An RNA of 177 nucleotides, treated with DMS and read out base by base. The DMS profile rests on 92,511 reads. Values cover nucleotides 27 to 126. DMS adducts were read by reverse transcription with MarathonRT.

RNA sequence: GGGAACGACUCGAGUAGAGUCGAAAACAGGCGUGUCGGCCGCAAAGGAAGUUUGGGUGGACGAGCCGCCUUCCGCUCUCGGCACCGUAUCUCGAAUACUUUCUCGUUGCUGGGACCUUAGGCGCGGUCUACUGAGCCGGUUCGCUGGUUCGGUAGAAAAAGAAACAACAACAACAAC
Reactivity to DMS in 0.01 (KOAc 150mM, MgCl2 10mM, bicine 150mM(pH8.5), 24C), signal-to-noise 9, nucleotides 027 to 126: c100a100g000g010c020g010u000g010u000c020g000g020c010c020g010c050a040a060a080g010g010a070a070g020u000u010u010g000g000g020u000g010g000a040c040g000a100g010c050c010g000c020c010u000u010c020c040g010c140u000c010u000c020g000g000c010a030c070c050g000u010a040u020c050u020c120g000a110a070u020a070c110u010u010u020c070u010c060g010u010u000g010c010u000g000g010g000a070c060c030u010u010a050g000g010c030g010c020g000g000